[RMDB]
RNA sequence: GGGAACGACUCGAGUAGAGUCGAAAAGUAAGCACAGGAAAUCUGAACCAGUGAUGAUCAUGAAAAUGUCCAUCACAGAGCACAGAUGAUUUUCAGGGCAAUAAAACUAUUCUGUUUGAUACCACAAUGGUGAAAAAUGUCAUUAUACAUUUGCUCAAUUUAUCCGUCCAUUCGUGGACGGAUAAAUAAAAGAAACAACAACAACAAC
Reactivity to 2A3 in 0.01 (KOAc 150mM, MgCl2 10mM, bicine 150mM(pH8.5), 24C), signal-to-noise 3, nucleotides 027 to 156: g060u090a080a010g000c060a020c030a110g000g100a040a060a010u000c010u020g010a050a070c050c020a030g000u010g000a010u000g000a000u080c020a010u020g090a030a050a050a070u040g000u050c070c000a000u030c000a000c000a010g070a020g030c110a040c010a080g030a020u070g020a060u040u030u060u090c060a060g060g000g000c010a020a040u060a090a070a010a000c010u050a080u120u140c030u010g100u050u080u120g110a090u100a090c000c010a030c070a140a140u120g030g000u060g070a090a030a000a020a030u030g030u030c020a030u040u300a060u040a160c090a090u060u050u070g010c010u010c030a030
Reactivity to DMS in 0.01 (KOAc 150mM, MgCl2 10mM, bicine 150mM(pH8.5), 24C), signal-to-noise 2, nucleotides 027 to 156: g010u000a140a140g010c000a050c050a080g040g000a030a110a030u010c030u000g000a130a090c020c040a300g000u000g020a010u000g010a050u000c040a050u000g010a120a110a160a030u000g020u000c020c020a070u010c040a020c000a160g020a140g030c050a150c060a120g010a050u010g010a100u000u010u000u000c030a110g000g000g010c040a040a150u000a030a090a040a070c100u000a070u000u000c060u000g010u000u000u000g010a230u020a050c140c030a030c120a020a090u000g000g070u020g000a020a030a020a140a020u000g000u000c070a100u000u010a150u000a060c040a060u000u000u000g020c010u000c050a050